[RMDB]
RNA sequence: GGGAACGACUCGAGUAGAGUCGAAAAUACCUUCUUCGGAAGGUAAAAAAAUCCUAAGUCGCUGAGGAAGAAGACAUGCCGCUGUCGGAAACGACAGAUGGCAACAGCUUCUUCUACCCACCAGCGAUAUGGAAAAAAAGCAAUGUUCGCAUUGCAAACUUAGUACCACGUUCGCGUGGUACUAAGUAAAAGAAACAACAACAACAAC
Reactivity to 2A3 in 0.01 (KOAc 150mM, MgCl2 10mM, bicine 150mM(pH8.5), 24C), signal-to-noise 1, nucleotides 027 to 156: u050a000c000c000u000u010c000u030u050c110g050g000a000a000g000g000u000a000a000a000a010a000a000a020u080c060c000u110a190a040g030u040c000g000c000u000g010a060g050g000a010a000g000a000a000g000a030c020a070u010g000c000c000g030c000u000g000u000c000g040g070a120a100a070c030g010a000c000a000g040a270u100g010g000c000a000a000c000a000g000c000u000u000c000u000u000c000u000a020c010c000c010a060c020c010a000g000c000g000a010u010a010u020g000g010a000a050a020a060a040a030a010g000c000a000a000u050g030u090u170c210g060c170a000u000u030g010c000a100a000